[RMDB]
RNA sequence: GGGAACGACUCGAGUAGAGUCGAAAACACAGGCGACUUAAUCGGAGAGCGGUUACACGCGAGGAUGAUGAAAUUAUUACAUCAGUAGACUCGAGAUUACUACAACUUGCGUUGCUAUCUCAAAUAAUCAUCGAUAUCAAUUCGUUGAUAUCGAUGAAAAAGAAACAACAACAACAAC
Reactivity to 2A3 in 0.01 (KOAc 150mM, MgCl2 10mM, bicine 150mM(pH8.5), 24C), signal-to-noise 8, nucleotides 027 to 126: c070a000c020a030g090g000c020g030a050c040u080u180a080a070u120c050g040g010a020g010a020g090c090g000g020u070u100a040c050a000c030g010c010g010a010g050g030a050u070g000a000u010g060a060a070a050u300u230a120u110u180a080c000a010u000c010a000g020u040a010g050a070c030u020c100g060a070g010a120u110u150a030c020u010a030c000a070a040c010u020u030g000c010g020u020u060g000c010u030a050u060c010u000c010a070a110a090u210a080a090
Reactivity to DMS in 0.01 (KOAc 150mM, MgCl2 10mM, bicine 150mM(pH8.5), 24C), signal-to-noise 7, nucleotides 027 to 126: c090a070c120a050g010g010c040g010a090c120u000u000a050a060u010c070g010g010a090g010a110g010c070g020g000u000u020a060c150a100c030g000c020g010a040g010g000a170u000g010a040u010g000a060a090a140u010u010a090u010u010a130c020a020u010c010a070g020u000a060g010a090c070u000c070g000a120g000a080u000u000a080c080u000a040c070a080a110c040u000u000g010c050g010u000u010g020c080u000a090u000c020u000c010a060a060a070u010a080a110

Source: RMDB library M2PK90, as collected in RNAgym. The record gives the reactivity of an RNA of 177 nucleotides to 2A3 and DMS. The reactions ran in a buffer of 150 mM KOAc, 10 mM MgCl2 and 150 mM bicine (pH 8.5), at 24 C. The 2A3 profile rests on 11,691 reads. Values cover nucleotides 27 to 126.